Description
An RNA of 177 nucleotides, treated with 2A3 and read out base by base. The reactions ran in a buffer of 150 mM KOAc, 10 mM MgCl2 and 150 mM bicine (pH 8.5), at 24 C.
[RMDB]
RNA sequence: GGGAACGACUCGAGUAGAGUCGAAAACCUUAAAUCACUUAUAUAAGUCUUAUCAGAGGUAAUUAUAGUUCCACCUCUUAGUAUUGUUCCCAUAUAUACCUCCUAACUUUUAAGCUUUAAAGUAUUUAUUAUCCUCAUCGUUCGCGAUGAGGAUAAUAAAAGAAACAACAACAACAAC
Reactivity to 2A3 in 0.01 (KOAc 150mM, MgCl2 10mM, bicine 150mM(pH8.5), 24C), signal-to-noise 2, nucleotides 027 to 126: c010c000u040u010a120a190a100u120c010a000c050u110u010a020u020a010u030a160a060g050u010c010u010u000a030u080c040a050g010a000g010g000u070a060a080u220u130a050u050a130g160u060u090c110c000a050c060c000u050c040u020u140a020g010u050a150u070u150g020u020u000c000c000c030a000u020a000u010a010u000a050c000c000u000c040c030u080a150a160c060u070u090u060u100a030a050g020c000u020u030u160a060a130a020g010u010a030u050u000u000